[RMDB]
RNA sequence: GGGAACGACUCGAGUAGAGUCGAAAACCAAUGGCGGGCCAUAUAAAACCUCAGUGGACUAAGCUGCAAAGCCGGUGGAUUACAAAGGCGGAGAGCUCUCAAAUCUUGUAUACUCGGAGUUUCAUCACGAACAUUAGAGGUUCGCCUCUAAUGUUCGAAAAGAAACAACAACAACAAC
Reactivity to 2A3 in 0.01 (KOAc 150mM, MgCl2 10mM, bicine 150mM(pH8.5), 24C), signal-to-noise 3, nucleotides 027 to 126: c000c000a030a100u040g040g000c030g000g020g000c000c020a040u120a000u090a200a100a000a050c010c030u080c020a020g030u030g080g000a030c020u030a040a040g020c010u040g040c100a160a020a000g020c030c010g030g030u080g020g030a040u060u020a050c040a020a070a050g020g000c000g080g010a130g000a000g030c000u000c000u000c010a060a210a100u070c060u130u160g040u080a010u030a100c070u060c030g040g010a120g000u000u000u070c070a100u120c030a020
Reactivity to DMS in 0.01 (KOAc 150mM, MgCl2 10mM, bicine 150mM(pH8.5), 24C), signal-to-noise 2, nucleotides 027 to 126: c000c010a060a060u000g010g010c040g010g000g030c020c150a050u040a040u000a010a130a100a110c040c020u000c070a090g010u000g030g010a120c060u000a140a120g010c030u020g000c120a100a070a140g020c020c000g070g000u000g000g000a030u000u010a090c080a080a150a060g000g000c060g000g000a140g000a180g000c020u040c010u020c010a060a120a060u010c060u060u010g040u010a040u000a030c050u000c040g010g000a110g000u000u000u010c000a050u000c200a160
The data come from the RNA Mapping Database (RMDB), library RFM100. An RNA of 177 nucleotides, treated with 2A3 and DMS and read out base by base. The DMS profile rests on 1,981 reads. High DMS reactivity at an A or C suggests that its Watson-Crick edge is free. 2A3 adducts were read by reverse transcription with SuperScript II with manganese. The RNA was probed in 150 mM KOAc, 10 mM MgCl2 and 150 mM bicine (pH 8.5) at 24 C. The 2A3 profile rests on 1,199 reads. For DMS the reverse transcriptase was MarathonRT.